[RMDB]
This 177-nucleotide RNA was probed chemically with DMS. For DMS, 5,283 sequencing reads were counted. Conditions: 150 mM KOAc, 10 mM MgCl2 and 150 mM bicine (pH 8.5), 24 C.
RNA sequence: GGGAACGACUCGAGUAGAGUCGAAAAUUGGGAAACUUAUUUGGAAACAUUGCACUGUUAGAUGCAUGACCCUUCCUGGCAUAUACUAAAGGAGUAAAGGACCUUCCAAAUUGAAUUAGGACCCUCCAAUAUGAUCUCAGUUCGCUGAGAUCAUAUUAAAAGAAACAACAACAACAAC
Reactivity to DMS in 0.01 (KOAc 150mM, MgCl2 10mM, bicine 150mM(pH8.5), 24C), signal-to-noise 4, nucleotides 027 to 126: u010u000g010g010g010a150a120a130c040u000u000a060u010u000u000g000g000a050a040a240c090a060u000u010g020c020a030c030u000g030u010u010a070g020a120u000g010c000a020u000g000a210c120c000c020u000u000c000c010u000g000g010c200a120u010a120u010a120c180u010a090a130a040g000g000a080g020u000a060a070a090g000g000a110c180c100u000u000c000c020a010a010a030u000u010g000a060a100u010u010a070g010g000a180c020c000c010u000c050c050